[RMDB]
RNA sequence: GGGAACGACUCGAGUAGAGUCGAAAAGAUAUGGACCGUACCUUAGUAUUAUGGCUUUUGACGCUCAGGAGAUCGGAAACGAUCUUAUUGGAGCGAUAAGCCAUAAUACUAAGACGGUCCUAAGUCACACAUUCGUAUCGUUCGCGAUACGAAUGUGAAAAGAAACAACAACAACAAC
Reactivity to DMS in 0.01 (KOAc 150mM, MgCl2 10mM, bicine 150mM(pH8.5), 24C), signal-to-noise 3, nucleotides 027 to 126: g020a040u020a300u010g000g010a000c000c000g000u000a150c300c020u010u000a010g010u000a010u000u010a010u000g000g020c000u000u000u000u000g020a230c100g000c010u000c010a110g000g010a010g000a000u010c010g010g000a120a120a200c010g000a010u000c000u000u010a030u010u000g020g010a000g020c000g000a120u000a010a000g010c010c000a000u000a000a000u000a000c000u000a000a000g010a020c020g010g010u000c000c000u000a010a080g010u000c010a300
Reactivity to 2A3 in 0.01 (KOAc 150mM, MgCl2 10mM, bicine 150mM(pH8.5), 24C), signal-to-noise 2, nucleotides 027 to 126: g020a040u090a060u180g010g000a020c020c010g060u230a260c050c000u010u010a010g000u020a000u000u000a010u010g000g000c000u110u110u130u220g300a190c010g010c010u000c010a030g150g050a010g000a010u000c010g050g050a040a100a040c010g010a010u000c050u010u000a270u160u210g300g000a010g000c010g010a000u010a010a000g010c000c010a000u000a010a000u000a000c000u000a010a000g000a000c000g010g000u000c000c000u010a000a000g020u000c020a030